[RMDB]
RNA sequence: GGGAACGACUCGAGUAGAGUCGAAAAUGCACCUAAAAGCGUUUCCUUGCAAGCCCGUUAACUGCUCUUGGAAAUCGUAGAUGUGUGCAAAAUCAAUCCUCACAAUAGCAAGUGAUUUUAGUUCCUCAUUUCUGCGUUGGUUCGCCAACGCAGAAAUAAAAGAAACAACAACAACAAC
Reactivity to 2A3 in 0.01 (KOAc 150mM, MgCl2 10mM, bicine 150mM(pH8.5), 24C), signal-to-noise 3, nucleotides 027 to 126: u010g010c020a040c020c010u100a150a140a000a090g020c020g000u000u000u000c000c000u000u020g050c170a080a070g010c010c110c010g160u110u120a010a080c050u040g000c000u010c010u040u000g000g010a000a030a030u260c040g000u030a010g060a260u080g200u040g000u000g000c000a020a020a000a060u050c030a030a040u030c020c030u000c010a050c040a030a100u130a100g070c040a170a110g060u020g070a090u010u040u160u260a050g000u010u030c010c000u000c000
Reactivity to DMS in 0.01 (KOAc 150mM, MgCl2 10mM, bicine 150mM(pH8.5), 24C), signal-to-noise 1, nucleotides 027 to 126: u080g000c040a000c000c000u020a000a130a300a300g000c000g000u000u000u000c000c040u000u000g000c020a140a000g030c000c120c140g060u000u000a110a250c300u080g020c020u000c090u000u000g000g000a000a080a020u000c000g000u000a020g020a260u000g000u000g010u000g010c020a000a100a030a120u000c130a080a110u000c040c000u000c050a020c100a000a140u000a140g000c220a180a120g000u030g000a070u000u000u020u000a100g000u000u000c030c000u000c120